[RMDB]
RNA sequence: GGGAACGACUCGAGUAGAGUCGAAAAGAUAGAGAACGCUUGGUCAUCGAAAGACCCUACAUCUUGCUUGGAGUCCUGCUGGUAAUGUUCCUGAGUCUAAUCGGACUGCUGGCCAUUGCAGGGAUCAGCAUCGUAAUGGCUUCGGCCAUUACGAUGCAAAAGAAACAACAACAACAAC
Reactivity to DMS in 0.01 (KOAc 150mM, MgCl2 10mM, bicine 150mM(pH8.5), 24C), signal-to-noise 1, nucleotides 027 to 126: g020a120u010a120g020a140g050a070a090c110g020c180u030u020g000g000u000c010a090u000c170g020a180a160a090g000a060c010c010c040u000a040c090a060u000c060u000u000g010c080u000u000g020g000a140g000u000c020c040u000g020c020u010g020g000u010a050a150u030g010u010u000c040c000u050g000a070g000u010c040u000a090a180u010c230g000g000a030c040u010g020c120u010g000g030c200c010a050u000u030g040c070a020g000g000g000a070u000c060a100